[RMDB]
RNA sequence: GGGAACGACUCGAGUAGAGUCGAAAAACGGUCAUAUACGUAUGACCGAAUGAGCAUAACAGGGCCACCCCAAAGCAUUCACAUUGUGGCCCCUGUCAGAUUCUGGUAAAUCUGCGAGUUCUGCUAAAUUAGGUAACUCUCUUCGGAGAGUUACCAAGAGUCUAUAGGUGUUCGCACCUAUAGACUCAAAAGAAACAACAACAACAAC
Reactivity to 2A3 in 0.01 (KOAc 150mM, MgCl2 10mM, bicine 150mM(pH8.5), 24C), signal-to-noise 2, nucleotides 027 to 156: a000c030g000g000u000c030a000u050a000u020a000c220g080u010a000u000g000a000c020c010g020a020a100u060g050a000g010c030a030u010a120a030c000a040g030g000g000c000c000a020c010c000c060c030a020a260a000g040c050a060u240u210c050a050c020a190u100u220g030u020g000g000c000c000c000c010u020g070u050c000a020g000a010u080u000c020u240g040g030u090a070a070a030u010c000u020g010c010g020a080g020u040u030c040u000g010c030u070a090a080a030u210u090a090g000g000u000a000a000c000u020c000u000c000u020u030c090g010g000a000g000a000g000u000u000a000c000c000a000a000
Chemical mapping of a 207-nucleotide RNA with 2A3. Reactivities are rounded to 0.1 and cut off at 0 and 3. It was measured as part of the RMDB library M2RFPK.